[RMDB]
RNA sequence: GGGAACGACUCGAGUAGAGUCGAAAAUGCGUUCGCCCCACACGCCGAUGCGGGUGUUGUCCAACAGCACGGUGCGGUCGGCAGCGUUCUCAACCAGCCGACCCCACCCGGACCGGGCGUGACACCCGCUCUGGCGCCAUUUCGAUGGCGCCAGAGCAAAAGAAACAACAACAACAAC
Reactivity to DMS in 0.01 (KOAc 150mM, MgCl2 10mM, bicine 150mM(pH8.5), 24C), signal-to-noise 2, nucleotides 027 to 126: u110g000c060g000u020u010c060g000c000c000c050c060a150c150a020c000g000c010c090g060a120u040g000c040g010g000g000u000g000u020u030g000u050c130c040a130a110c090a090g000c220a250c300g030g050u000g020c300g020g000u000c000g030g000c000a050g040c160g010u000u000c060u020c110a120a020c170c040a240g000c000c000g000a020c010c000c140c000a000c040c000c000g020g000a060c170c300g000g020g020c030g110u000g000a040c010a020c020c000c020
Reactivity to 2A3 in 0.01 (KOAc 150mM, MgCl2 10mM, bicine 150mM(pH8.5), 24C), signal-to-noise 2, nucleotides 027 to 126: u100g030c040g010u020u040c050g100c060c050c000c000a050c000a000c010g010c000c000g180a210u240g060c060g000g020g000u030g000u020u070g050u080c030c040a020a040c040a180g040c050a050c080g000g000u010g020c000g000g010u010c000g070g000c010a010g010c100g080u140u060c200u040c160a080a190c020c020a030g000c000c000g000a010c000c010c010c000a000c020c030c000g000g030a040c050c000g010g000g000c000g000u000g000a000c000a010c010c000c000